[RMDB]
RNA sequence: GGGAACGACUCGAGUAGAGUCGAAAACUCAUGCCCCACUUGCCCUUCUGAGGUUCAGCCAAAUGAGGCUCCCACCCCCAUGACUCACAAGGCAGCUGGGAGCUCCGGCACUACCCGUGGGGAUGGUCAGGACUCUAGGGGCCUUGGGGGGUGUGGAGGGUAUAGUCCUAUUCGUAGGACUAUACCCAAAAGAAACAACAACAACAAC
Reactivity to 2A3 in 0.01 (KOAc 150mM, MgCl2 10mM, bicine 150mM(pH8.5), 24C), signal-to-noise 1, nucleotides 027 to 156: c010u010c000a010u020g000c000c000c000c000a070c020u030u040g000c000c000c000u130u000c120u060g100a110g070g000u100u070c070a000g000c050c010a010a190a300u250g060a200g060g000c040u070c020c000c000a030c030c000c000c050c000a020u080g090a070c100u130c090a060c030a130a010g060g020c050a150g060c020u030g010g010g000a000g020c010u060c030c000g010g000c020a060c130u090a070c030c030c020g090u140g040g070g010g020a030u050g030g020u060c080a170g040g000a020c000u060c010u030a030g030g070g030g010c000c030u010u010g060g000g000g000g000g000u000g060u070g020g040a070